[RMDB]
RNA sequence: GGGAACGACUCGAGUAGAGUCGAAAAUCUAUCACCAGCCCAUGUUUACGACACGAAUGGGCUGUUGCAAAUUACGUAUAGCUCUUGCAACAUCGUGUCGUAACGUUCCCAAGCUAUACGCCACAAACCUAUCCUCGGAAUUCGUUCCGAGGAUAGGAAAAGAAACAACAACAACAAC
Reactivity to 2A3 in 0.01 (KOAc 150mM, MgCl2 10mM, bicine 150mM(pH8.5), 24C), signal-to-noise 3, nucleotides 027 to 126: u030c000u030a100u120c040a030c140c020a000g030c010c010c010a030u090g100u100u110u070a030c000g010a000c000a000c030g050a150a110u150g080g120g000c050u000g020u000u000g000c010a010a020a090u210u090a080c030g020u050a030u030a050g000c020u050c040u140u070g050c030a010a010c010a070u040c010g010u000g000u000c010g000u000a040a050c000g000u010u000c000c000c000a000a000g000c000u030a040u000a070c030g020c020c030a120c030a040a060a040
Reactivity to DMS in 0.01 (KOAc 150mM, MgCl2 10mM, bicine 150mM(pH8.5), 24C), signal-to-noise 2, nucleotides 027 to 126: u010c070u000a110u040c080a080c090c030a080g030c000c010c000a160u000g000u000u000u000a020c030g000a000c010a000c020g000a090a120u000g010g000g040c130u010g000u000u000g020c060a010a030a060u000u010a080c070g000u020a040u000a010g020c040u000c140u000u000g000c040a000a040c050a040u000c020g020u010g020u000c010g030u010a070a150c120g020u000u020c000c010c000a170a060g000c000u000a020u010a010c000g030c140c130a080c160a080a040a080

This 177-nucleotide RNA was probed chemically with 2A3 and DMS. Source: RMDB library M2PK90, as collected in RNAgym.